RNA sequence: GGGAACGACUCGAGUAGAGUCGAAAAACAUAGGUUGGGCCAUAGGCGCUGCGGUUCAUCAUCUUGCCCUCGCCAGGACCGCUCCCGUUCUACUACUUGGCGUCGCGGAUAGCGGGUUGGAAAACAAUCCUAUUCCAUGUUUCGACAUGGAAUAGGAAAAAGAAACAACAACAACAAC
Reactivity to DMS in 0.01 (KOAc 150mM, MgCl2 10mM, bicine 150mM(pH8.5), 24C), signal-to-noise 3, nucleotides 027 to 126: a090c090a100u020a050g020g010u000u000g010g010g010c020c020a060u000a130g010g010c020g020c140u000g000c090g020g010u000u000c080a060u010c100a050u010c080u010u000g000c020c010c020u000c070g010c010c020a060g010g010a130c030c040g010c040u000c090c000c020g010u000u000c080u010a070c060u010a090c080u010u010g030g000c050g020u000c090g000c040g010g010a060u000a050g020c050g000g000g000u000u000g010g000a060a050a050a120c150a070a130

The record gives the reactivity of an RNA of 177 nucleotides to DMS. For DMS the reverse transcriptase was MarathonRT. The RNA was probed in 150 mM KOAc, 10 mM MgCl2 and 150 mM bicine (pH 8.5) at 24 C.